Structure probing data (DMS) for a 177-nucleotide construct.
[RMDB]
RNA sequence: GGGAACGACUCGAGUAGAGUCGAAAAAGGUGUGGUGGUGCUCACCUGUGGUCCCCACUAUGCUACUUGAGAGGUUGGGGCUGCAGUCAGCCAUAAUUGUGCCAGUACACUCUAGCAUGGGUGACAGUGUCCGGGGAUAUUUCGAUAUCCCCGGACAAAAAGAAACAACAACAACAAC
Reactivity to DMS in 0.01 (KOAc 150mM, MgCl2 10mM, bicine 150mM(pH8.5), 24C), signal-to-noise 1, nucleotides 027 to 126: a080g010g010u000g000u000g020g000u000g020g000u000g030c040u000c040a070c100c020u010g020u010g020g000u000c020c010c000c030a070c070u000a100u010g000c030u000a050c240u030u000g000a090g020a170g000g000u000u010g030g010g000g000c030u010g000c090a090g010u010c090a110g000c050c080a120u000a050a100u000u000g020u010g030c020c000a040g000u000a110c030a000c060u010c050u000a050g030c100a030u000g030g000g020u010g010a050c230a080g000
For DMS the reverse transcriptase was MarathonRT. The reactions ran in a buffer of 150 mM KOAc, 10 mM MgCl2 and 150 mM bicine (pH 8.5), at 24 C.